[RMDB]
RNA sequence: GGGAACGACUCGAGUAGAGUCGAAAAGCAGCGCACUCCUCCUCCCAGUGCUCUUACAUCGGACUGACAACACUCCUCCUCCCAGUUGUCAGUCAGGAUCAAGAGCCCGGCGCACCUCCUCCCGCGUAAAACGUCACUAUUUCGAUAGUGACGUUUUAAAAGAAACAACAACAACAAC
Reactivity to 2A3 in 0.01 (KOAc 150mM, MgCl2 10mM, bicine 150mM(pH8.5), 24C), signal-to-noise 4, nucleotides 027 to 126: g020c040a000g020c000g000c040a030c050u030c010c010u020c000c010u030c000c000c010a030g020u050g040c000u000c000u020u060a070c060a060u020c020g020g010a000c000u000g000a000c000a010a000c030a030c070u110c040c030u040c010c020u040c010c020c000a020g010u000u000g010u000c010a000g000u000c010a010g050g000a010u020c070a020a010g010a010g020c000c010c010g030g010c010g000c010a040c000c000u010c000c010u020c000c000c000g040c000g030u040
Reactivity to DMS in 0.01 (KOAc 150mM, MgCl2 10mM, bicine 150mM(pH8.5), 24C), signal-to-noise 5, nucleotides 027 to 126: g020c070a100g010c050g020c040a100c040u000c030c010u010c010c000u010c040c010c030a100g000u010g010c000u000c000u000u010a120c200a080u000c000g000g000a010c000u010g000a010c010a010a010c010a110c160u020c070c050u010c050c060u000c020c020c030a110g020u000u000g000u000c000a010g010u000c000a000g020g010a030u000c210a050a030g000a030g000c020c050c090g010g000c060g010c020a100c040c020u010c030c040u000c010c020c010g030c160g020u010